[RMDB]
RNA sequence: GGGAACGACUCGAGUAGAGUCGAAAAUGUGGAAGUCCUGCUCGGGGCGGAAGCAUUAAAACCAUUCGAGCUAGUAAAUGCGUGGCGUGUCUCUCCGCAGCGUGUUGGCGAAUGUAAAGAGUGACUAUUGACCACGCAACGUUCGCGUUGCGUGGAAGAUCCUAGCAUAGUUCGCUAUGCUAGGAUCAAAAGAAACAACAACAACAAC
Reactivity to DMS in 0.01 (KOAc 150mM, MgCl2 10mM, bicine 150mM(pH8.5), 24C), signal-to-noise 2, nucleotides 027 to 156: u010g000u000g010g020a300a280g010u000c010c000u000g000c250u000c170g000g000g010g020c010g000g010a300a300g010c040a030u010u000a020a130a130a120c060c030a090u000u000c030g010a100g050c040u010a150g000u010a050a020a030u000g020c020g000u010g020g030c040g030u000g030u000c050u000c050u000c100c010g010c010a090g000c020g020u000g030u000u030g000g010c050g010a020a100u000g040u010a050a030a080g000a090g000u000g010a160c030u000a180u000u010g000a120c010c010a060c000g020c000a000a000c000g030u000u010c240g030c070g000u010u000g000c000g020u000g010g000a010a020
Reactivity to 2A3 in 0.01 (KOAc 150mM, MgCl2 10mM, bicine 150mM(pH8.5), 24C), signal-to-noise 4, nucleotides 027 to 156: u020g010u020g020g000a020a010g020u010c010c020u060g130c170u100c150g000g000g000g010c010g000g000a000a000g000c000a000u000u090a020a030a010a030c020c020a010u050u100c070g040a040g070c040u130a070g070u140a080a050a060u070g010c010g030u030g040g020c000g010u030g000u010c010u000c000u000c010c010g010c020a000g000c010g000u020g030u060u040g060g020c060g060a080a060u180g070u230a030a090a010g020a000g020u020g000a020c000u060a150u110u190g060a060c010c010a020c000g010c000a000a000c010g000u030u070c180g000c020g100u010u010g000c000g000u000g000g000a000a010
About this RNA:
The data come from the RNA Mapping Database (RMDB), library M2RFPK. Structure probing data (DMS and 2A3) for a 207-nucleotide construct. For 2A3, 3,212 sequencing reads were counted.